[RMDB]
RNA sequence: GGGAACGACUCGAGUAGAGUCGAAAAUACGAGCGCCAAUGCCUUUCGCCAUAUUGCGCCGGAGCGGCUUUUGCCCUACCGCACGCUGCCGCUUUUUGCUGUGGGUGAGGGGACAGCGAAGGCUGCACGAUGGCGUGCAGUUCGCUGCACGCCAUCGAAAAGAAACAACAACAACAAC
Reactivity to 2A3 in 0.01 (KOAc 150mM, MgCl2 10mM, bicine 150mM(pH8.5), 24C), signal-to-noise 2, nucleotides 027 to 126: u250a030c060g010a020g070c020g000c010c050a030a050u120g000c000c020u050u130u140c120g020c030c010a070u150a100u120u130g010c050g050c010c040g000g010a030g010c010g000g010c050u060u040u030u050g030c010c000c010u040a100c020c000g020c040a010c040g140c020u030g020c010c030g030c000u020u060u010u110u270g030c050u000g000u030g060g000g000u030g000a020g020g070g010g010a070c020a000g000c000g050a030a020g100g000c050u050g010c000a020
Reactivity to DMS in 0.01 (KOAc 150mM, MgCl2 10mM, bicine 150mM(pH8.5), 24C), signal-to-noise 2, nucleotides 027 to 126: u000a110c080g000a150g000c020g000c020c160a070a120u010g010c020c050u000u000u000c100g020c070c090a080u010a140u000u000g000c020g030c100c110g020g000a120g040c030g020g020c050u000u010u020u000g010c010c050c080u000a170c100c060g020c010a040c190g000c060u000g000c030c030g000c010u000u000u020u010u000g010c010u010g020u010g000g000g030u010g010a040g010g010g000g010a050c200a030g010c010g010a060a080g000g000c010u000g020c020a100
Notes
Chemical mapping of a 177-nucleotide RNA with 2A3 and DMS. DMS adducts were read by reverse transcription with MarathonRT. The 2A3 profile rests on 1,413 reads. Conditions: 150 mM KOAc, 10 mM MgCl2 and 150 mM bicine (pH 8.5), 24 C. For 2A3 the reverse transcriptase was SuperScript II with manganese. Source: RMDB library OK2TST, as collected in RNAgym.